RNA sequence: GGGAACGACUCGAGUAGAGUCGAAAAGCGAACAUCACCAACACCAAUUCCAGAACACGGGACAUACCUAGGUCUACUUUUCUACCUGCAGAGGAUUCAAUCUUGCUUACCUGAUCUGCCACCUGCCGGCUCAGCUGUCCCUUAAAGCCCUUCAUGAUAAAUAAUCCGGUUUCGACCGGAUUAUUUAAAAAGAAACAACAACAACAAC
Reactivity to DMS in 0.01 (KOAc 150mM, MgCl2 10mM, bicine 150mM(pH8.5), 24C), signal-to-noise 2, nucleotides 027 to 156: g010c040g010a090a100c040a140u000c050a070c010c020a070a080c020a070c010c020a090a110u010u000c020c020a130g010a100a110c140a090c090g010g010g020a060c040a110u000a070c030c040u000a050g000g010u000c010u000a030c040u000u010u000u000c020u000a040c030c020u000g000c040a060g010a170g020g010a120u000u020c040a070a100u040c040u000u000g040c060u010u000a070c050c010u030g000a100u000c040u030g000c000c010a080c050c000u000g020c060c030g000g020c010u000c010a090g030c010u000g000u000c010c020c010u020u010a080a050a110g020c030c010c020u010u000c000a050u010g010a300
Reactivity to 2A3 in 0.01 (KOAc 150mM, MgCl2 10mM, bicine 150mM(pH8.5), 24C), signal-to-noise 1, nucleotides 027 to 156: g040c010g010a010a030c010a090u090c050a010c030c020a030a050c070a050c050c040a090a080u100u050c000c010a010g030a120a000c040a040c110g000g000g010a020c020a040u130a090c000c040u050a040g020g010u020c010u080a080c020u000u110u030u020c000u010a080c000c000u070g030c010a020g000a030g170g030a030u060u080c100a030a010u030c020u010u060g010c000u020u020a060c000c030u010g000a050u030c010u050g040c020c010a020c020c000u020g000c000c000g060g000c030u020c020a020g050c010u030g030u020c010c000c000u050u030a040a040a000g010c000c010c000u000u030c000a060u200g130a030